[RMDB]
RNA sequence: GGGAACGACUCGAGUAGAGUCGAAAAGAUAUGGAAACUUCCAGACAUGAGUUGACGUCGGAAACGACGUACACUCAACAGCUGGAGUUUCCUAAGUCAAAACGUGUGUGAGUUCGCUCACACACGAUCUCAACAUGUUGUUCGCAACAUGUUGAGAAAAAGAAACAACAACAACAAC
Reactivity to 2A3 in 0.01 (KOAc 150mM, MgCl2 10mM, bicine 150mM(pH8.5), 24C), signal-to-noise 4, nucleotides 027 to 126: g000a000u020a010u060g020g040a000a000a010c020u300u090c040c010a020g000a030c130a300u300g000a020g040u060u080g050a000c000g000u000c000g000g030a010a010a020c000g000a010c000g020u020a010c000a000c000u030c040a150a090c150a050g000c000u000g000g000a000g010u000u000u000c000c000u010a000a010g000u000c030a010a010a110a220c030g000u000g000u000g000u010g000a020g010u070u250c300g100c180u020c000a000c010a000c000a000c000g010a020
Reactivity to DMS in 0.01 (KOAc 150mM, MgCl2 10mM, bicine 150mM(pH8.5), 24C), signal-to-noise 3, nucleotides 027 to 126: g000a030u000a120u000g000g000a020a010a000c000u000u030c010c010a020g000a020c120a210u020g010a010g000u000u010g020a010c020g020u000c000g000g000a020a020a040c000g010a030c010g010u000a030c090a000c010u000c010a130a080c250a150g010c000u000g000g000a040g020u000u000u000c000c000u000a010a070g010u000c010a120a090a110a180c010g000u010g000u000g010u000g010a020g030u020u030c300g020c000u010c010a010c000a000c000a000c010g000a050
An RNA of 177 nucleotides, treated with 2A3 and DMS and read out base by base. For DMS the reverse transcriptase was MarathonRT. The reactions ran in a buffer of 150 mM KOAc, 10 mM MgCl2 and 150 mM bicine (pH 8.5), at 24 C.